Chemical mapping of a 177-nucleotide RNA with 2A3.
It was measured as part of the RMDB library RFM100.
The RNA was probed in 150 mM KOAc, 10 mM MgCl2 and 150 mM bicine (pH 8.5) at 24 C.
For 2A3 the reverse transcriptase was SuperScript II with manganese.

[RMDB]
RNA sequence: GGGAACGACUCGAGUAGAGUCGAAAAGCCUUUCCUGAUAAAGGAGGACCAUUCUCAGUCAAGGGUAUGUGAGUACCUGUUCUCCCCUGCCAGAAUCUCAAACGAGCUCUCUGUAAAAAUCACAAGACAGGGUACCCACUUUCGAGUGGGUACCCUGAAAAGAAACAACAACAACAAC
Reactivity to 2A3 in 0.01 (KOAc 150mM, MgCl2 10mM, bicine 150mM(pH8.5), 24C), signal-to-noise 1, nucleotides 027 to 126: g020c000c000u020u040u080c060c000u070g090a070u140a170a070a000g000g000a030g000g000a020c000c060a070u100u010c000u020c090a070g030u110c090a000a180g030g000g010u000a030u210g090u000g010a030g030u080a080c000c080u070g040u090u000c030u000c040c000c000c000u010g030c000c000a000g000a150a150u070c000u000c030a210a190a100c090g000a020g000c000u000c000u000c000u000g080u100a000a000a000a000a000u230c000a060c020a180a000g140a020